[RMDB]
The record gives the reactivity of an RNA of 177 nucleotides to 2A3 and DMS. For DMS the reverse transcriptase was MarathonRT. The RNA was probed in 150 mM KOAc, 10 mM MgCl2 and 150 mM bicine (pH 8.5) at 24 C. It was measured as part of the RMDB library OK2TST.
RNA sequence: GGGAACGACUCGAGUAGAGUCGAAAAAGAUUGCAGCAAGAGGAGUAUGCUGCUGUUCUGAUCCAGGCUGUACAUGUUGAUGAGCUCUACAGCUUGUUGGCAGAGCAUGAGCAGAGAGCGCCAAUGGACCGGGUGAAAAGUUCGCUUUUCACCCGGUAAAAGAAACAACAACAACAAC
Reactivity to 2A3 in 0.01 (KOAc 150mM, MgCl2 10mM, bicine 150mM(pH8.5), 24C), signal-to-noise 1, nucleotides 027 to 126: a010g070a030u060u070g000c010a010g000c000a140a000g040a070g250g000a050g050u070a050u080g010c040u050g020c010u010g010u030u000c020u020g010a070u030c040c000a010g000g020c020u020g020u030a010c010a250u110g030u070u110g140a260u100g130a020g040c000u080c050u090a010c030a000g000c000u000u040g110u030u080g060g000c010a010g010a000g000c030a040u080g050a000g000c030a010g000a020g020a010g010c070g030c010c020a000a040u070g010g000
Reactivity to DMS in 0.01 (KOAc 150mM, MgCl2 10mM, bicine 150mM(pH8.5), 24C), signal-to-noise 2, nucleotides 027 to 126: a070g000a090u000u010g020c060a030g030c030a060a090g020a120g010g000a100g000u010a050u010g010c000u000g000c040u000g010u010u010c020u000g000a060u000c300c010a060g010g000c010u010g030u010a020c150a040u080g030u000u010g010a090u010g010a100g020c020u000c250u010a050c080a010g010c010u010u000g010u010u000g010g000c020a020g000a080g000c020a020u000g010a060g000c060a010g000a130g010a090g010c040g020c040c050a050a090u010g000g010